Structure probing data (DMS and 2A3) for a 177-nucleotide construct.
RNA sequence: GGGAACGACUCGAGUAGAGUCGAAAAGAUAUGGACUGAACCAACAGCUAACGGCAUCGGAAACGAUGUUUAGACAUGGCUCAGUCCUAAGUCAAAAGAAGUUUAGUUGUUCGCAACUAAACUUCAACAAAGCAACUCUGUUCGCAGAGUUGCUUUGAAAAGAAACAACAACAACAAC
Reactivity to DMS in 0.01 (KOAc 150mM, MgCl2 10mM, bicine 150mM(pH8.5), 24C), signal-to-noise 3, nucleotides 027 to 126: g000a020u000a300u020g010g010a000c000u010g020a010a010c000c000a030a080c300a180g000c010u000a010a150c300g020g010c000a000u000c010g010g010a090a080a140c010g000a000u000g010u000u000u010a010g010a060c060a130u000g000g010c030u000c000a010g000u000c000c000u000a020a060g000u000c040a060a060a140a080g010a010a010g020u000u010u000a000g000u000u000g010u000u000c240g010c000a020a030c000u000a000a000a000c000u000u000c010a090a150
Reactivity to 2A3 in 0.01 (KOAc 150mM, MgCl2 10mM, bicine 150mM(pH8.5), 24C), signal-to-noise 1, nucleotides 027 to 126: g020a000u040a010u050g000g010a020c000u010g000a010a000c030c010a000a170c080a190g060c030u060a050a020c100g160g000c020a010u000c010g010g000a050a050a000c000g010a000u000g020u000u010u030a020g000a020c110a110u060g000g000c000u000c030a000g010u000c000c000u000a010a000g020u000c030a000a000a050a230g040a010a010g010u000u000u010a010g010u020u040g050u040u190c300g020c180a000a000c020u030a000a000a000c000u000u000c000a000a000
For 2A3 the reverse transcriptase was SuperScript II with manganese. The 2A3 profile rests on 2,565 reads. Source: RMDB library TTRDEL, as collected in RNAgym. The DMS profile rests on 1,727 reads.